This 177-nucleotide RNA was probed chemically with DMS and 2A3. DMS adducts were read by reverse transcription with MarathonRT. In probing experiments dimethyl sulfate is read out at A N1 and C N3, which are open when not base-paired.
[RMDB]
RNA sequence: GGGAACGACUCGAGUAGAGUCGAAAACCUAAACUAACAAAGGUAAACGGCUCAGUGUGCGGGGUAUUACACUCGGUUUAAUGUCUGAAUGCGAUAAUCCGCACGAUGAUCUCUUUAUCUUUGUUUGUAAAUGGAUGUCGUUCGCGACAUCCAUUUAAAAAGAAACAACAACAACAAC
Reactivity to DMS in 0.01 (KOAc 150mM, MgCl2 10mM, bicine 150mM(pH8.5), 24C), signal-to-noise 1, nucleotides 027 to 126: c000c000u000a040a050a300c070u000a000a010c000a010a000a000g000g010u000a000a000a010c300g010g010c110u000c000a010g000u050g000u000g000c010g000g040g010g010u030a000u000u000a170c020a000c060u010c000g000g000u010u020u080a300a260u040g010u020c000u000g000a060a050u020g020c000g000a000u000a000a070u000c000c000g000c020a000c000g010a090u000g010a010u000c010u010c230u000u000u000a000u000c000u000u000u000g000u000u000u000g000
Reactivity to 2A3 in 0.01 (KOAc 150mM, MgCl2 10mM, bicine 150mM(pH8.5), 24C), signal-to-noise 3, nucleotides 027 to 126: c030c000u050a200a080a000c020u020a000a000c010a000a010a010g000g000u010a000a000a010c060g010g020c010u010c020a010g040u020g010u000g230c010g000g000g010g060u040a000u000u040a030c020a000c000u000c000g040g110u040u160u200a120a080u270g220u110c010u020g000a010a000u000g010c030g010a000u000a010a030u000c010c000g000c000a000c000g010a020u000g000a010u000c040u010c010u050u000u000a000u000c000u000u030u000g000u010u000u010g010